[RMDB]
RNA sequence: GGGAACGACUCGAGUAGAGUCGAAAAGAUCGAGCGAAGUCUGAAUUUAUUGCGAAUAUCAGUCACGAUUUGCGAACUCCAAUUAAUGGAAUUUUAGGAAUCGCACAGAUUUUCAAUAUGCAUGAAAUAGCAUACGGAGUUUCGACUCCGUAUGCUAAAAAGAAACAACAACAACAAC
Reactivity to 2A3 in 0.01 (KOAc 150mM, MgCl2 10mM, bicine 150mM(pH8.5), 24C), signal-to-noise 1, nucleotides 027 to 126: g020a030u050c030g020a020g070c020g050a050a040g020u000c000u000g040a030a020u100u120u050a090u010u140g000c010g020a020a000u040a080u030c030a080g100u030c040a000c170g000a000u020u000u120g080c000g000a060a000c040u020c000c030a030a120u170u220a140a150u120g000g050a050a070u000u000u000u260a030g100g000a030a010u000c010g000c010a040c020a040g000a000u030u030u050u070c060a070a060u140a060u260g010c000a020u050g080a080a010a050
Reactivity to DMS in 0.01 (KOAc 150mM, MgCl2 10mM, bicine 150mM(pH8.5), 24C), signal-to-noise 1, nucleotides 027 to 126: g010a080u000c020g000a130g030c010g000a100a080g010u000c000u010g000a040a040u000u000u030a090u020u010g030c250g000a020a020u000a120u000c010a100g030u010c130a060c040g010a000u010u000u010g010c070g030a020a100c140u000c010c000a000a240u000u010a140a060u000g000g000a030a080u000u010u000u000a160g000g000a000a020u000c030g060c260a020c110a140g000a070u000u000u020u000c000a070a080u030a020u010g000c140a050u000g000a050a050a180